The record gives the reactivity of an RNA of 177 nucleotides to DMS and 2A3.
The DMS profile rests on 4,532 reads.
[RMDB]
RNA sequence: GGGAACGACUCGAGUAGAGUCGAAAAGAUAUGGACUUACGGGAAGCCUAAGACAGGUUCUCGGAAACGAGAACUCGAGGAACUACUUCAUGUAAGUCCUAAGUCAAAAGUUGCGUUCGCGCAACAACAUUUCUCUAACGUUCGCGUUAGAGAAAUGAAAAGAAACAACAACAACAAC
Reactivity to DMS in 0.01 (KOAc 150mM, MgCl2 10mM, bicine 150mM(pH8.5), 24C), signal-to-noise 5, nucleotides 027 to 126: g010a030u010a300u020g000g020a000c010u010u000a000c010g010g010g020a020a010g020c040c030u030a200a110g000a130c300a080g000g000u010u010c000u000c000g000g000a050a060a090c000g000a010g000a010a000c000u010c030g010a060g020g010a090a080c120u010a190c020u000u000c010a060u000g010u000a000a020g010u000c000c000u000a020a080g000u000c030a080a080a090a120g010u000u000g010c000g020u000u010c210g010c010g010c000a000a010c000a090a180
Reactivity to 2A3 in 0.01 (KOAc 150mM, MgCl2 10mM, bicine 150mM(pH8.5), 24C), signal-to-noise 4, nucleotides 027 to 126: g010a010u040a020u070g020g000a010c000u010u010a000c030g000g000g080a020a060g110c030c080u120a190a010g110a060c060a040g050g030u000u010c000u000c000g020g010a030a020a000c010g000a000g000a000a020c020u020c060g050a060g070g030a070a030c120u300a110c000u300u000c000a070u040g000u010a010a000g000u000c000c000u010a020a000g000u000c010a040a040a060a180g000u000u010g010c020g010u030u100c300g010c000g010c090a010a000c000a000a010